An RNA of 177 nucleotides, treated with 2A3 and read out base by base. The data come from the RNA Mapping Database (RMDB), library OK1LIB. As a SHAPE reagent, 2A3 marks flexible, mostly unpaired nucleotides at the ribose 2'-OH.
RNA sequence: GGGAACGACUCGAGUAGAGUCGAAAACGAUCCAGAACGCUAUCUUGGAGGGUGGAGCAGGGUCACUGAAUGAAAUUCUUGACGCACCCGCGGGACGAUCCCUAUCAUAUAGACUAGCGAAGCAGACGGGUUAAUCAAGCUUCGGCUUGAUUAACCCAAAAGAAACAACAACAACAAC
Reactivity to 2A3 in 0.01 (KOAc 150mM, MgCl2 10mM, bicine 150mM(pH8.5), 24C), signal-to-noise 1, nucleotides 027 to 126: c070g000a150u040c000c000a000g060a110a000c040g000c050u120a010u060c000u000u070g000g000a070g000g000g030u000g000g000a170g070c080a100g000g000g000u000c000a020c050u000g170a050a120u080g200a130a060a180u070u020c040u000u020g000a080c010g010c040a000c000c020c000g050c040g010g000g000a010c060g000a010u050c000c000c120u010a010u110c040a050u270a010u020a150g020a150c030u000a000g000c000g020a120a000g020c040a050g010a060c110